[RMDB]
RNA sequence: GGGAACGACUCGAGUAGAGUCGAAAACUUUCAUUCAAGUGUGAGGGAGACAGCCUAGUCACUUGCAUUCCAUCAAAUCUCAACCUUUAUGCCUGAAUUGAGACCUUCGGCUACCACAAAUUAAUUGUGACAAAUUAGUGUUCGCACUAAUUUGUCAAAAAGAAACAACAACAACAAC
Reactivity to DMS in 0.01 (KOAc 150mM, MgCl2 10mM, bicine 150mM(pH8.5), 24C), signal-to-noise 3, nucleotides 027 to 126: c100u000u000u010c080a050u010u000c070a030a040g010u000g020u000g010a100g020g000g010a130g000a100c230a090g010c050c030u000a130g000u000c050a050c040u000u010g010c090a100u010u010c050c020a060u010c080a080a110a080u000c010u000c040a080a070c060c030u010u010u010a060u020g010c010c010u010g010a110a080u000u010g000a070g010a080c060c060u000u000c040g040g000c040u010a070c050c030a080c150a060a050a080u010u000a040a130u010u010g000
Reactivity to 2A3 in 0.01 (KOAc 150mM, MgCl2 10mM, bicine 150mM(pH8.5), 24C), signal-to-noise 2, nucleotides 027 to 126: c010u100u120u090c050a070u070u040c070a050a030g000u000g030u010g060a060g020g040g020a100g000a040c030a020g060c000c010u030a050g080u040c030a010c030u010u020g020c010a050u080u000c040c020a060u060c030a050a140a210u020c040u000c020a050a080c010c010u130u140u040a050u130g050c000c020u020g020a090a050u060u080g020a050g010a080c020c040u030u040c040g030g000c010u050a070c000c020a060c030a120a090a030u140u120a060a130u140u170g080